[RMDB]
RNA sequence: GGGAACGACUCGAGUAGAGUCGAAAAUUAGUUUUACCCUACUGAUGGCGUGUCAUUGUAAUAGUAAUUGAACUUAGUACGAGAGGAACCGUUCAUUCACGUAAUUGGUAUUUACAUCUGUUUGAUAAGUUGAUUAAGUAUUCGUACUUAAUCAACUAAAAGAAACAACAACAACAAC
Reactivity to DMS in 0.01 (KOAc 150mM, MgCl2 10mM, bicine 150mM(pH8.5), 24C), signal-to-noise 9, nucleotides 027 to 126: u010u030a130g010u010u010u010u000a160c010c000c020u010a040c030u000g010a030u000g010g020c070g010u010g010u010c160a080u010u010g010u020a110a110u010a100g010u010a060a040u010u000g010a020a020c010u000u010a070g010u010a160c010g000a220g010a200g010g010a090a100c180c240g000u000u000c010a020u010u000c030a020c030g010u000a060a030u000u000g010g010u000a020u010u010u020a070c180a070u010c130u000g020u000u000u000g000a110u010a090
Reactivity to 2A3 in 0.01 (KOAc 150mM, MgCl2 10mM, bicine 150mM(pH8.5), 24C), signal-to-noise 9, nucleotides 027 to 126: u040u020a020g110u030u030u050u190a110c000c000c000u010a010c010u020g020a020u020g050g010c010g010u020g030u060c080a110u100u220g100u170a140a150u080a210g140u070a050a100u050u060g000a000a010c000u000u000a000g000u000a000c000g000a000g010a030g120g000a000a000c000c000g010u000u000c010a010u020u030c010a000c010g010u010a050a010u010u010g010g000u030a060u050u160u080a070c070a120u070c060u060g110u040u050u020g140a170u080a120